Source information: Chemical mapping of a 177-nucleotide RNA with DMS and 2A3. 2A3 adducts were read by reverse transcription with SuperScript II with manganese. DMS adducts were read by reverse transcription with MarathonRT. The DMS profile rests on 1,037 reads. The reactions ran in a buffer of 150 mM KOAc, 10 mM MgCl2 and 150 mM bicine (pH 8.5), at 24 C.
[RMDB]
RNA sequence: GGGAACGACUCGAGUAGAGUCGAAAAGUACCGCUACCAAUUCCUCAUCCACAGGUAAAGAAGAAAUGGAAGAGGAAGAAACUGAAGAACGUGAAGACCAGAGCGGUGAAAACGAGCUAGAUCCAGAAUCACUAAUCCUCUUCGGAGGAUUAGUGAUAAAAGAAACAACAACAACAAC
Reactivity to DMS in 0.01 (KOAc 150mM, MgCl2 10mM, bicine 150mM(pH8.5), 24C), signal-to-noise 2, nucleotides 027 to 126: g000u020a040c010c000g010c030u000a130c190c110a140a080u000u010c010c000u030c020a070u000c030c000a030c090a130g000g010u000a110a120a150g000a120a120g020a080a200a130u000g000g000a000a040g010a020g000g000a020a030g000a070a090a260c080u000g000a120a110g000a060a080c110g020u010g000a080a020g010a070c070c050a080g000a000g000c060g030g030u030g000a060a040a080a060c140g000a030g040c020u000a080g000a170u010c010c040a050g000a150
Reactivity to 2A3 in 0.01 (KOAc 150mM, MgCl2 10mM, bicine 150mM(pH8.5), 24C), signal-to-noise 1, nucleotides 027 to 126: g020u020a000c000c040g000c030u050a030c030c080a040a190u010u010c010c010u000c010a040u020c010c010a050c040a040g200g060u170a090a090a060g160a130a030g050a010a180a020u030g010g000a000a020g000a010g000g020a020a000g000a050a060a000c080u070g060a090a020g020a160a040c060g070u050g090a130a000g030a080c030c030a000g050a000g140c000g000g030u030g020a040a110a000a030c000g000a010g080c050u090a020g020a120u070c010c000a020g050a000